[RMDB]
RNA sequence: GGGAACGACUCGAGUAGAGUCGAAAAGAUGUCAUUUGGUAAGGCUAUAUCAGGUGGCACUACAGGUACUAUGUCGCAUCAUGGUGCUUGUGAACUCGUAGCUUGAUGCGACAAGUUAUGAGUGAUCUAUUUUACUAUAGCCUUAGUGAGAUAGAGACGAGUCGUGAUUGUUCGCAAUCACGAUUCGAAAAGAAACAACAACAACAAC
Reactivity to DMS in 0.01 (KOAc 150mM, MgCl2 10mM, bicine 150mM(pH8.5), 24C), signal-to-noise 4, nucleotides 027 to 156: g010a060u000g020u000c020a030u000u000u000g020g040u000a020a040g010g010c030u000a060u000a030u000c020a030g010g040u000g010g000c000a050c020u000a100c080a100g020g010u010a060c050u000a080u000g000u000c090g030c090a080u000c030a130u010g020g020u000g020c020u000u000g030u010g010a090a090c060u000c050g050u000a050g020c040u000u000g010a110u000g030c180g010a110c040a010a030g010u000u000a030u000g010a080g020u010g010a140u000c010u000a020u000u000u000u000a030c020u000a020u000a050g010c020c010u000u010a010g020u000g010a030g010a030u000a020g010a060g010a300
Reactivity to 2A3 in 0.01 (KOAc 150mM, MgCl2 10mM, bicine 150mM(pH8.5), 24C), signal-to-noise 9, nucleotides 027 to 156: g100a050u020g010u020c010a020u020u000u030g030g000u020a020a020g030g000c020u020a010u000a000u070c020a010g030g010u010g010g020c020a000c030u140a070c030a070g110g070u120a040c030u090a110u100g010u030c030g010c040a030u030c000a010u070g070g040u050g070c050u110u070g070u090g140a120a080c030u020c070g030u020a020g060c010u010u010g010a010u030g010c000g000a010c000a000a010g010u020u050a110u090g090a050g060u070g060a050u000c000u010a020u010u020u000u010a010c010u010a000u010a020g020c000c000u000u000a010g010u000g000a020g000a010u010a010g030a000g000a030